An RNA of 207 nucleotides, treated with 2A3 and read out base by base.
RNA sequence: GGGAACGACUCGAGUAGAGUCGAAAAGAACUCGUAAAUCCACUGUUGCAACUUUUAUAGUUGCCAAUGACGAAAACUACGGCGCGGAGUACAAGCUGGCUGCGUAAGCAGUCCUCUUGACCCGUUGCUUCUGGUAGCUUCGGCUCCAGCAAUCACUCGGACAAUAUAGGUUCGCCUAUAUUGUCCGAAAAGAAACAACAACAACAAC
Reactivity to 2A3 in 0.01 (KOAc 150mM, MgCl2 10mM, bicine 150mM(pH8.5), 24C), signal-to-noise 2, nucleotides 027 to 156: g030a090a040c030u030c070g060u080a020a090a150u050c060c030a070c090u070g050u120u090g010c000a000a000c000u000u030u180u270a300u230a090g020u000u020g000c020c000a020a040u040g040a010c010g040a040a050a020a050c140u150a090c130g000g030c020g000c000g020g010a260g080u040a230c000a000a000g000c050u020g010g000c000u000g000c000g000u070a100a120g000c000a000g030u020c010c020u020c020u000u000g000a000c030c010c020g000u040u300g000c000u030u020c010u000g020g050u130a020g020c000u070u070c260g050g000c000u000c000c000a040g000c010a030a180u110c040a020c080u020

2A3 adducts were read by reverse transcription with SuperScript II with manganese. For 2A3, 873 sequencing reads were counted.